[RMDB]
RNA sequence: GGGAACGACUCGAGUAGAGUCGAAAACAAUGAGGAGAUGUCAAGUGGUCAGUUGCAUAUAAUGCAAUCUUCCUCUGGAGAUCAGAGGAAAGAUCUAUGGUUGUUAUUUAAAGAUGCGAGUCACCUAUGGAGGGCUGCUAAUUGAAGUUAAAUGUGAUCCAGUGCAUAGGUUCGCCUAUGCACUGGAAAAAGAAACAACAACAACAAC
Reactivity to 2A3 in 0.01 (KOAc 150mM, MgCl2 10mM, bicine 150mM(pH8.5), 24C), signal-to-noise 1, nucleotides 027 to 156: c030a000a050u160g010a020g070g050a020g020a030u030g060u100c060a120a080g000u020g080g000u020c030a040g020u040u020g000c110a040u080a030u100a160a070u090g000c000a080a140u000c000u030u000c000c000u000c000u010g010g050a190g030a140u300c000a000g000a000g010g000a010a000a010g020a000u000c020u090a040u130g000g000u000u040g000u120u000a160u070u090u110a000a170a000g020a000u040g000c040g000a000g080u050c000a030c020c000u040a000u080g000g050a010g030g000g030c050u010g060c000u080a000a080u110u120g060a090a080g000u000u080a070a190a000u210g020u170g020a050